[RMDB]
RNA sequence: GGGAACGACUCGAGUAGAGUCGAAAAGAUAUGGAGCGAUUCUCUAGCGUGUUCUUGGAUUUAUGCGUAUAAGUAUAUCGGAAACGAUAUACUAAACGCAUUGUCAGAAUCGGGAUCGCUCCUAAGUCAAACAUGGUCUCGUUCGCGAGACCAUGAAUCCUAUACAGGCCUUCGGGCCUGUAUAGGAAAAAGAAACAACAACAACAAC
Reactivity to 2A3 in 0.01 (KOAc 150mM, MgCl2 10mM, bicine 150mM(pH8.5), 24C), signal-to-noise 2, nucleotides 027 to 156: g010a010u040a020u130g010g000a000g000c010g010a020u120u040c080u080c130u150a110g110c150g120u240g050u090u020c060u050u200g210g000a140u250u300u150a010u070g010c010g040u020a100u020a300a020g000u000a000u000a010u010c010g000g030a050a020a080c020g000a000u010a000u010a000c010u010a030a030a000c000g000c000a000u000u010g010u010c000a000g010a040a010u020c030g000g000g000a010u030c020g000c020u010c010c000u000a000a000g010u000c010a000a000a050c000a000u000g020g000u000c020u010c000g020u070u010c050g020c000g150a000g000a000c000c000a000u000g000a010a000